[RMDB]
RNA sequence: GGGAACGACUCGAGUAGAGUCGAAAAGACACCGGGGAUGAAAUAGUCCAUCGCGCGGCCAAGCAUAUGCUGGCUCUUCUUGGCAACGCCGCGCGUACUGGAACGCAGCAUGGCGUUGGUCGCGGGAAUCCUCGCUGCUAUUCGUAGCAGCGAGGAUAAAAGAAACAACAACAACAAC
Reactivity to 2A3 in 0.01 (KOAc 150mM, MgCl2 10mM, bicine 150mM(pH8.5), 24C), signal-to-noise 1, nucleotides 027 to 126: g060a000c040a000c050c010g050g100g050g010a010u060g060a080a020a110u180a090g090u000c020c010a040u040c030g060c000g000c000g120g030c000c000a000a010g000c010a080u090a010u170g030c010u040g260g130c030u010c060u070u000c000u030u040g030g060c070a100a020c000g000c050c140g140c040g010c000g020u020a000c010u000g000g070a050a010c120g030c030a030g000c010a030u000g070g060c100g090u030u010g000g000u000c010g040c000g030g030g040a070
Reactivity to DMS in 0.01 (KOAc 150mM, MgCl2 10mM, bicine 150mM(pH8.5), 24C), signal-to-noise 1, nucleotides 027 to 126: g000a140c140a100c070c000g000g010g000g030a090u000g010a060a100a110u000a180g020u020c010c050a170u000c040g020c020g000c040g010g020c000c020a010a080g000c010a080u000a010u000g000c020u000g000g000c040u010c070u000u000c030u000u000g010g000c100a100a040c080g030c010c140g000c240g000c010g050u000a040c000u000g000g000a020a020c300g000c000a030g030c020a040u010g000g030c000g030u000u000g010g010u000c010g000c020g000g000g010a090